The data come from the RNA Mapping Database (RMDB), library RFM100. Chemical mapping of a 177-nucleotide RNA with 2A3. The RNA was probed in 150 mM KOAc, 10 mM MgCl2 and 150 mM bicine (pH 8.5) at 24 C. The 2A3 profile rests on 700 reads. Values are in units of 0.01, from 0 to 300, in steps of 10. For 2A3 the reverse transcriptase was SuperScript II with manganese. Values cover nucleotides 27 to 126.
[RMDB]
RNA sequence: GGGAACGACUCGAGUAGAGUCGAAAAGAUACUCUUGAACGACUAGCAACGCACAAACGUCUUCUGUGCGACAACAUCUGAAUGUUUGUCACAGGACUUUUGAGCGUUGCCAGUCGAAAGAGGAAAAGGUCGGAUUUGAUUUCGAUCAAAUCCGACCAAAAGAAACAACAACAACAAC
Reactivity to 2A3 in 0.01 (KOAc 150mM, MgCl2 10mM, bicine 150mM(pH8.5), 24C), signal-to-noise 1, nucleotides 027 to 126: g090a020u220a000c000u000c000u000u030g050a080a040c010g000a000c000u000a000g000c030a000a000c010g000c000a050c000a010a000a000c000g040u030c000u220u100c020u050g000u030g010c000g080a020c020a010a010c000a030u160c100u140g140a300a030u120g100u030u190u080g110u120c000a000c000a000g030g000a000c020u030u000u000u000g040a060g000c010g000u000u000g010c000c000a000g000u020c000g000a000a020a000g000a000g000g080a000a080a010a000